RNA sequence: GGGAACGACUCGAGUAGAGUCGAAAAAAGCACGUCGCAAUGACGUAAGGUGGGACUUUUCCCUCGAGUUCGAGCGGUCGGACUCAGAGGGGAGUGUGAUCCUGGUACCGCCGUAGAAACUGGAUUACGACGUCUACCCGGGAUUCAAACUCGGCCCCUAUUAUAUACUGUUCGCAGUAUAUAAUAGAAAAGAAACAACAACAACAAC
Reactivity to 2A3 in 0.01 (KOAc 150mM, MgCl2 10mM, bicine 150mM(pH8.5), 24C), signal-to-noise 5, nucleotides 027 to 156: a030a000g100c050a020c010g000u010c020g040c150a190a200u300g020a020c020g000u030a050a000g110g000u080g020g030g010a050c020u090u090u090u110c000c000c000u000c000g010a000g000u010u000c000g000a040g040c170g170g230u090c000g000g000a000c000u000c130a030g000a000g010g020g000g000a020g010u080g030u040g010a050u030c010c020u030g010g010u030a020c010c000g010c020c010g030u040a040g160a090a220a050c100u130g060g020a060u100u060a030c030g000a000c010g070u000c020u020a040c020c010c040g000g000g020a080u220u190c110a110a080a090c070u020c040g110g020c000c000c000
Reactivity to DMS in 0.01 (KOAc 150mM, MgCl2 10mM, bicine 150mM(pH8.5), 24C), signal-to-noise 2, nucleotides 027 to 156: a040a070g000c110a040c010g010u010c010g030c090a200a190u010g010a070c010g040u010a060a100g010g030u000g000g020g020a070c030u010u000u000u000c000c000c000u000c020g030a040g000u000u000c000g000a080g020c300g010g030u010c020g030g000a030c010u010c010a060g020a040g020g020g020g000a000g040u010g010u010g000a070u030c000c010u030g010g030u010a060c090c010g010c000c000g000u000a110g010a120a130a250c140u020g000g010a260u000u000a050c000g010a030c010g010u000c020u000a020c050c000c050g030g000g010a130u000u000c070a040a050a060c050u000c040g010g020c000c010c040